[RMDB]
This 177-nucleotide RNA was probed chemically with 2A3 and DMS. Source: RMDB library OK1LIB, as collected in RNAgym. The 2A3 profile rests on 10,138 reads.
RNA sequence: GGGAACGACUCGAGUAGAGUCGAAAAAUGCAACACGACUGGAGGUGCAUGAUUGAAUUCUUCCGGGGAAAGAGUGACUUCAAUCAACUGCUAACAGCUCUUCAAUGGAAAGAUUUUUCAUACACUACUCACACCAUUCUUUCGAGAAUGGUGUGAGAAAAGAAACAACAACAACAAC
Reactivity to 2A3 in 0.01 (KOAc 150mM, MgCl2 10mM, bicine 150mM(pH8.5), 24C), signal-to-noise 9, nucleotides 027 to 126: a000u110g020c050a090a040c020a040c140g140a050c050u110g080g070a090g050g030u020g020c030a020u050g010a030u000u070g030a020a040u040u000c000u030u000c010c010g000g010g040g040a090a040a010g010a000g020u030g040a040c040u040u030c050a020a080u040c020a060a120c070u060g000c010u070a110a070c020a060g010c020u000c010u040u050c030a040a100u070g030g020a070a070a070g060a080u050u060u000u010u040c010a010u040a060c030a010c030u110a040
Reactivity to DMS in 0.01 (KOAc 150mM, MgCl2 10mM, bicine 150mM(pH8.5), 24C), signal-to-noise 2, nucleotides 027 to 126: a060u020g000c130a090a040c070a080c060g020a130c120u000g050g000a070g030g080u010g000c110a110u040g030a090u080u010g000a030a060u010u000c040u010u020c010c000g030g010g040g000a010a020a060g000a090g020u000g000a140c150u010u000c010a040a070u010c130a160a120c080u000g060c300u030a110a050c120a300g010c080u000c000u000u000c030a030a110u050g000g020a000a020a110g000a030u000u000u000u030u000c010a000u010a110c060a040c030u040a040